[RMDB]
RNA sequence: GGGAACGACUCGAGUAGAGUCGAAAAGUACUGGAUCAUGACUUUCGAGCAUGAUGAUUUGUAUUACGGAGCUGGAUUGAAUGGCGGGGUGCAAGUAUAUGUAGGCAACCCGAGAGUCAAAGAUAUACGACUCUAAAUAUUUCGAUAUUUAGAGUCGAAAAGAAACAACAACAACAAC
Reactivity to 2A3 in 0.01 (KOAc 150mM, MgCl2 10mM, bicine 150mM(pH8.5), 24C), signal-to-noise 5, nucleotides 027 to 126: g020u020a010c020u030g020g060a010u010c010a020u030g200a300c000u080u100u110c190g060a030g010c010a010u030g000a010u010g040a050u080u080u240g030u030a040u060u050a040c080g050g000a050g030c030u070g050g020a120u070u090g060a100a080u080g110g020c030g020g010g000g000u030g000c010a020a030g050u060a100u020a020u300g120u070a050g060g000c010a030a020c000c010c010g010a020g000a000g030u020c020a090a050a020g050a020u110a010u050a190
Reactivity to DMS in 0.01 (KOAc 150mM, MgCl2 10mM, bicine 150mM(pH8.5), 24C), signal-to-noise 8, nucleotides 027 to 126: g010u000a030c020u000g010g010a040u000c010a030u000g000a130c020u000u010u010c170g020a070g020c010a030u000g010a020u000g010a140u000u010u010g010u000a020u000u010a130c110g010g010a100g020c040u000g010g010a120u000u010g010a070a070u000g000g020c030g010g000g010g020u000g000c030a030a070g010u010a080u000a080u020g020u010a100g010g000c020a030a060c040c010c010g010a050g000a090g000u000c040a060a070a120g000a090u010a110u010a170